RNA sequence: GGGAACGACUCGAGUAGAGUCGAAAAUCUGUCAUCUAAUACCUAGGGAAGUAAGUAUGCGAGAUGGCUCUUGUUACUCCCAUUUAACCGAUCAGAAGCUAGAGGCCUGGAGGAGGACAGGGAUUUGCUCAAAGCAAUGCAGCUAGUUAGUGGUGGACGAUAGCCAGUGAUUCGUCACUGGCUAUCGAAAAGAAACAACAACAACAAC
Reactivity to 2A3 in 0.01 (KOAc 150mM, MgCl2 10mM, bicine 150mM(pH8.5), 24C), signal-to-noise 2, nucleotides 027 to 156: u020c040u070g070u040c000a020u000c020u090a120a030u020a050c000c030u080a070g060g030g050a100a040g090u160a030a000g010u010a040u150g100c140g040a070g010a070u010g010g060c020u040c040u050u070g050u030u110a070c140u020c010c000c020a010u120u100u080a040a080c040c030g030a060u140c030a040g050a050a010g020c040u100a050g000a020g130g050c020c030u050g050g010a020g000g000a010g000g000a000c050a050g020g000g000a030u020u010u100g040c000u060c060a070a040a040g020c010a080a000u050g010c010a000g000c000u030a030g060u030u020a010g030u020g030g000u050g000g000a000